[RMDB]
RNA sequence: GGGAACGACUCGAGUAGAGUCGAAAACUGAUAGUGGUGAAAGAUCAGUUAAACCUCGAGAGCAAGGAACUCCUAGCUUUCUUUGUGAAAUACUUCACCAACAUCACACCAACGUCUUUCGAUCACGUCACCUGACAUGUUUCGACAUGUCAGGUGAAAAAGAAACAACAACAACAAC
Reactivity to 2A3 in 0.01 (KOAc 150mM, MgCl2 10mM, bicine 150mM(pH8.5), 24C), signal-to-noise 2, nucleotides 027 to 126: c020u040g000a020u030a040g060u020g030g000u020g020a120a060a030g070a110u140c070a040g060u040u080a130a060a000c000c020u010c020g020a030g000a010g000c010a010a010g000g050a180a270c080u100c160c040u020a040g000c000u030u000u030c000u010u030u040g070u000g030a070a050a030u130a100c040u010u030c000a000c040c000a000a010c010a010u000c010a020c030a040c000c020a060a050c040g030u030c070u030u130u080c040g080a120u190c030a010c080g070
Reactivity to DMS in 0.01 (KOAc 150mM, MgCl2 10mM, bicine 150mM(pH8.5), 24C), signal-to-noise 2, nucleotides 027 to 126: c180u010g020a000u000a010g000u010g020g000u000g000a060a040a070g030a050u000c060a130g030u000u020a020a120a190c020c010u000c180g000a030g000a000g020c030a070a020g000g020a190a130c300u010c010c020u030a150g000c050u000u000u000c000u020u000u000g040u000g010a060a020a090u000a070c080u000u000c030a050c030c070a040a060c040a020u000c030a070c120a130c020c040a090a050c150g000u000c110u000u010u000c030g010a110u000c060a030c150g000